RNA sequence: GGGAACGACUCGAGUAGAGUCGAAAAGAUAUGGAGCCAGUACACGACUUUGAUCUCGGAAACGAGGGAGUCGGUACGGCUCCUAAGUCAAAACCUCGAAAAUCCAGUUCGCUGGAUUUUCGAGGAAUCAUUUUAACAUCUUCGGAUGUUAAAAUGAAAAAGAAACAACAACAACAAC
Reactivity to 2A3 in 0.01 (KOAc 150mM, MgCl2 10mM, bicine 150mM(pH8.5), 24C), signal-to-noise 2, nucleotides 027 to 126: g010a000u050a050u200g000g000a000g010c000c090a040g070u010a010c300a090c040g010a000c000u250u230u230g110a160u160c000u000c020g030g010a100a080a070c010g000a010g000g000g030a000g010u000c000g000g000u000a000c000g000g000c000u000c000c000u000a000a000g000u000c000a050a020a080a160c000c000u010c000g030a000a000a020a000u010c000c000a000g020u090u070c240g200c130u000g000g000a000u000u000u000u000c000g000a010g010g000a000a000
Reactivity to DMS in 0.01 (KOAc 150mM, MgCl2 10mM, bicine 150mM(pH8.5), 24C), signal-to-noise 2, nucleotides 027 to 126: g000a040u010a300u010g000g000a000g020c000c010a100g050u000a000c010a140c000g010a010c000u000u000u010g010a090u010c000u010c010g000g000a120a110a240c000g000a050g010g000g010a010g010u000c000g020g010u000a000c000g000g000c000u000c000c010u000a010a080g000u000c030a080a070a110a170c000c000u000c000g000a010a010a020a000u000c000c000a010g000u000u030c240g000c000u000g000g000a010u000u000u000u000c000g010a010g000g000a010a010